This 177-nucleotide RNA was probed chemically with 2A3. The reactions ran in a buffer of 150 mM KOAc, 10 mM MgCl2 and 150 mM bicine (pH 8.5), at 24 C.
[RMDB]
RNA sequence: GGGAACGACUCGAGUAGAGUCGAAAAGAUUACUUAAUAUGGUGCAUGAUCAAUACUUGGCAGCAUCAUAAUCCUGAUUACAGAAUAGUAGUGCUAACGCCCGAUUCCUUAAGACACGUGUUAAGUACGUGUGCUUCCUCUUCGGAGGAAGCACACGAAAAGAAACAACAACAACAAC
Reactivity to 2A3 in 0.01 (KOAc 150mM, MgCl2 10mM, bicine 150mM(pH8.5), 24C), signal-to-noise 1, nucleotides 027 to 126: g000a000u020u020a300c000u140u050a050a050u270a090u050g040g020u000g000c060a210u110g000a300u300c050a130a000u200a200c190u000u000g000g100c000a000g000c000a000u000c000a000u000a000a180u020c090c000u130g020a020u040u120a050c020a000g040a080a080u220a130g050u020a020g000u000g140c030u050a020a020c070g000c000c000c030g000a000u110u110c000c000u140u000a000a020g220a000c060a000c050g000u000g020u030u110a050a050g070u000a050
It was measured as part of the RMDB library OK1LIB. As a SHAPE reagent, 2A3 marks flexible, mostly unpaired nucleotides at the ribose 2'-OH.